RNA sequence: GGGAACGACUCGAGUAGAGUCGAAAAGCUCGGUCGAAACCUAUACGGCCAUGACCUUUGAAAUGAAGAUCGGCGACCGGCUCGACCAGCGGCAAUUGCUCGCCGAUCUCGUGGCGCAGCAAUAUAACUCAUCGUGAUCAUUCGUGAUCACGAUGAGAAAAGAAACAACAACAACAAC
Reactivity to DMS in 0.01 (KOAc 150mM, MgCl2 10mM, bicine 150mM(pH8.5), 24C), signal-to-noise 2, nucleotides 027 to 126: g040c010u000c070g050g020u030c000g010a020a100a170c070c050u000a130u020a120c220g030g000c010c010a090u010g020a050c060c040u000u000u000g020a130a130a000u020g000a100a020g020a030u000c000g000g010c040g020a050c060c180g020g000c070u000c060g000a090c070c040a060g000c010g000g010c160a120a060u010u020g020c140u020c000g000c000c020g020a020u000c020u000c000g000u000g000g020c020g040c110a070g010c060a030a070u000a080u030a050a150
Reactivity to 2A3 in 0.01 (KOAc 150mM, MgCl2 10mM, bicine 150mM(pH8.5), 24C), signal-to-noise 2, nucleotides 027 to 126: g010c020u010c060g030g020u010c020g000a110a030a000c010c000u010a070u010a170c070g080g000c000c000a020u020g040a040c000c000u050u030u120g210a190a140a080u090g020a070a080g010a000u020c010g020g010c020g050a090c000c080g090g000c030u020c030g060a090c080c040a020g000c060g040g000c010a040a210u110u150g000c000u000c000g000c000c000g030a030u020c010u000c040g030u060g010g000c080g010c050a030g040c050a030a030u160a020u060a140a050